[RMDB]
RNA sequence: GGGAACGACUCGAGUAGAGUCGAAAAGAUAUGGAGGUAGGGAGCGAUUGACUCGGAAACGAGUCAAAUCGCUUUGAUCUACCCUCCUAAGUCAAAACAAGGUAAAAAGUUCGCUUUUUACCUUGAAGUAAUUAUUCAGGUUCGCCUGAAUAAUUACAAAAGAAACAACAACAACAAC
Reactivity to DMS in 0.01 (KOAc 150mM, MgCl2 10mM, bicine 150mM(pH8.5), 24C), signal-to-noise 6, nucleotides 027 to 126: g000a040u000a300u000g000g010a030g010g010u000a020g000g000g000a000g020c010g020a020u000u000g000a010c000u000c010g010g010a090a090a150c000g000a010g000u000c010a000a020a040u000c000g010c020u000u000u010g010a070u010c010u000a020c130c040c020u010c000c010u000a050a140g010u000c030a100a060a140a230c010a010a010g000g000u000a010a000a010a010a010g010u000u010c260g010c010u000u000u000u000u000a000c000c000u000u000g000a030a110
Reactivity to 2A3 in 0.01 (KOAc 150mM, MgCl2 10mM, bicine 150mM(pH8.5), 24C), signal-to-noise 3, nucleotides 027 to 126: g020a000u060a020u150g010g000a010g000g010u010a000g030g000g010a010g040c010g010a000u000u010g010a000c010u010c010g020g000a070a060a030c010g000a010g020u020c000a010a020a010u010c010g000c010u070u030u010g000a000u010c000u010a010c030c010c000u000c000c000u020a090a030g040u040c020a000a020a150a270c000a030a000g000g030u000a020a010a010a000a010g020u070u160c240g120c090u040u000u010u000u010a010c000c000u000u010g000a000a000